[RMDB]
RNA sequence: GGGAACGACUCGAGUAGAGUCGAAAACCUCACUACAUUUUACUGUUCCUAAAGAAUUUGUGACAGGUACAGUAAAACGUCUUGCAAGGUUUAUCAGUUCCUAUAAACAGGUAAAUAACAAUAUAUGAAAAGCAAAGACUGUUCGCAGUCUUUGCAACCACGUUUCGUAGUUCGCUACGAAACGUGGAAAAGAAACAACAACAACAAC
Reactivity to 2A3 in 0.01 (KOAc 150mM, MgCl2 10mM, bicine 150mM(pH8.5), 24C), signal-to-noise 1, nucleotides 027 to 156: c000c000u030c010a010c010u000a000c000a040u010u000u010u010a010c000u000g020u030u040c000c000u060a100a080a080g090a300a280u270u270u230g120u080g100a030c110a070g060g000u010a010c000a000g000u000a010a000a000a010c000g020u000c020u020u090g000c080a160a060g000g080u000u000u000a170u090c010a030g000u030u020c000c000u010a080u130a090a090a000c070a000g060g060u060a050a140a090u090a100a000c040a070a070u080a020u030a040u190g050a120a110a000a000g010c000a000a000a000g000a000c000u000g040u060u090c170g000c100a000g010u020c000u000u000u000g010c000a000a010